[RMDB]
RNA sequence: GGGAACGACUCGAGUAGAGUCGAAAACGGACUUCGAGGGAUUGCUGAUUAACACAGGUUAUGUAGUAAUAUAGCCUGAGAAGUCUGACGGUAGUCCCUCAUGCUCUAUUAUGAGAAACUACGUCAAGGUACAGAUACAUUUCGAUGUAUCUGUACCAAAAGAAACAACAACAACAAC
Reactivity to 2A3 in 0.01 (KOAc 150mM, MgCl2 10mM, bicine 150mM(pH8.5), 24C), signal-to-noise 4, nucleotides 027 to 126: c010g010g020a010c010u020u050c150g000a000g010g000g000a000u010u000g010c000u010g030a300u010u030a050a010c050a000c010a060g020g020u010u000a000u030g080u070a100g050u100a290a040u120a030u020a110g020c000c000u030g030a080g040a150a020g020u000c060u000g000a000c010g020g000u010a010g000u000c000c000c000u000c000a000u030g000c000u000c000u060a180u230u080a150u220g020a030g050a070a080a000c080u140a030c070g060u040c060a070a020
Reactivity to DMS in 0.01 (KOAc 150mM, MgCl2 10mM, bicine 150mM(pH8.5), 24C), signal-to-noise 2, nucleotides 027 to 126: c130g020g000a040c030u000u000c100g030a090g030g000g000a020u000u000g000c030u000g010a100u000u000a000a010c040a200c060a020g000g000u000u000a010u000g010u050a110g030u030a060a020u070a050u010a020g000c000c000u020g010a070g000a030a130g000u000c070u020g040a010c090g000g000u020a000g000u000c020c010c000u000c000a030u010g000c060u030c020u020a070u020u020a070u000g000a020g000a130a120a040c080u020a020c130g000u000c070a060a160
This 177-nucleotide RNA was probed chemically with 2A3 and DMS. Reactivities are given for positions 27 through 126. The DMS profile rests on 4,009 reads. The RNA was probed in 150 mM KOAc, 10 mM MgCl2 and 150 mM bicine (pH 8.5) at 24 C. Source: RMDB library OK1LIB, as collected in RNAgym. 2A3 is a SHAPE reagent: it acylates the 2'-hydroxyl of flexible nucleotides of all four kinds.